Chemical mapping of a 207-nucleotide RNA with 2A3.
[RMDB]
RNA sequence: GGGAACGACUCGAGUAGAGUCGAAAAAGAUGUGAAUCAGUUGAGUGAGGGAUGGUCCAUCCAUGUGAAUACGCCAUCCCGUCUCUGUCGUCCGGCGUUGAGUGGAUGGGAGUGAGUUCGGAUGGGAGUGAGUACGACUGACUGGCAAGGUUAUUGCAGCCAUGCUCAUGUUCGCAUGAGCAUGGCUAAAAGAAACAACAACAACAAC
Reactivity to 2A3 in 0.01 (KOAc 150mM, MgCl2 10mM, bicine 150mM(pH8.5), 24C), signal-to-noise 1, nucleotides 027 to 156: a000g200a070u100g030u070g050a010a200u210c040a040g020u050u060g140a100g000u090g120a190g000g040g010a030u000g030g000u080c100c000a030u000c020c020a000u240g120u230g220a170a050u240a120c040g000c000c000a000u000c000c030c050g000u000c000u000c000u040g150u120c020g000u000c020c000g090g040c080g020u000u130g020a030g030u030g000g000a020u000g000g080g000a000g030u150g000a070g000u030u160c030g000g000a090u050g010g000g000a010g030u000g000a020g030u000a000c030g010a110c030u000g060a060c080u050g070g000c030a040a080g130g000u160u000a080u110u180g000c000

Record summary: For 2A3, 397 sequencing reads were counted. The data come from the RNA Mapping Database (RMDB), library OK3TST. For 2A3 the reverse transcriptase was SuperScript II with manganese.